[RMDB]
RNA sequence: GGGAACGACUCGAGUAGAGUCGAAAACAAAACGUAUGGCAUCUCGGUGAUUGUCACCAGCGUUGACGCCGGCGAUGUCAACUUCGAUUUCAAGGUCGAUGACCACCCCGAGUAGGCUCACCGUGGACGUACCGAUUAGCUUCGGCUAAUCGGUACGAAAAGAAACAACAACAACAAC
Reactivity to 2A3 in 0.01 (KOAc 150mM, MgCl2 10mM, bicine 150mM(pH8.5), 24C), signal-to-noise 2, nucleotides 027 to 126: c020a000a050a020a020c040g160u140a100u090g020g020c000a030u010c020u030c030g020g000u090g020a300u170u210g040u050c030a060c090c090a080g120c070g150u060u030g010a000c000g050c030c000g050g000c100g010a000u010g010u010c000a010a020c000u030u000c010g090a090u050u080u110c120a140a070g090g000u030c040g070a120u050g040a060c000c020a050c050c030c020c040g010a010g030u070a070g110g000c000u020c020a060c020c020g030u040g000g040a010
Reactivity to DMS in 0.01 (KOAc 150mM, MgCl2 10mM, bicine 150mM(pH8.5), 24C), signal-to-noise 1, nucleotides 027 to 126: c150a140a050a080a070c170g000u000a080u000g000g010c010a010u000c010u000c020g000g030u000g020a190u010u000g000u010c020a020c050c110a110g000c170g040u020u000g000a030c060g000c020c030g000g000c180g020a010u000g000u000c010a060a060c040u020u040c050g000a050u000u000u020c130a110a130g000g010u010c060g000a060u040g000a150c030c030a190c010c020c020c020g000a090g000u000a090g020g020c010u010c010a090c090c010g000u000g010g010a190

This 177-nucleotide RNA was probed chemically with 2A3 and DMS. It was measured as part of the RMDB library OK2TST. The 2A3 profile rests on 1,775 reads. For 2A3 the reverse transcriptase was SuperScript II with manganese.